[RMDB]
Chemical mapping of a 177-nucleotide RNA with DMS and 2A3. 2A3 adducts were read by reverse transcription with SuperScript II with manganese. The 2A3 profile rests on 38,592 reads.

RNA sequence: GGGAACGACUCGAGUAGAGUCGAAAACUAUGUACAGACAGUACAGUGGAUAAGGUCUGUGGAUAUCCAACUUCAACAAUGGUACUUGCAGUGGUAUCUAUCAAGAUAGGCAGGCUAUCAUAGAAAGAAGGUGUGUAUUAUUCGUAGUACGCACCUUAAAAGAAACAACAACAACAAC
Reactivity to DMS in 0.01 (KOAc 150mM, MgCl2 10mM, bicine 150mM(pH8.5), 24C), signal-to-noise 9, nucleotides 027 to 126: c160u000a030u010g000u000a010c010a050g010a060c090a070g010u010a030c040a230g030u020g010g010a110u000a040a060g010g010u000c010u000g000u000g000g010a040u000a020u020c030c040a090a120c120u010u010c040a080a100c170a080a040u000g000g010u010a030c030u000u000g000c020a110g010u030g020g020u000a010u000c000u000a090u050c230a080a040g000a020u000a030g000g000c020a020g000g010c200u000a010u000c020a020u010a070g010a080a080a090g010
Reactivity to 2A3 in 0.01 (KOAc 150mM, MgCl2 10mM, bicine 150mM(pH8.5), 24C), signal-to-noise 8, nucleotides 027 to 126: c010u010a030u060g130u000a010c010a050g100a020c010a020g050u040a020c010a040g050u090g090g030a120u040a140a040g050g020u000c010u010g010u010g010g020a010u010a020u030c020c010a030a050c010u030u030c010a030a040c030a060a170u080g050g000u050a030c010u010u020g000c010a020g020u050g090g020u030a010u000c010u020a140u090c060a070a020g020a080u030a020g050g010c010a000g010g000c010u010a000u030c020a010u020a030g090a030a070a000g100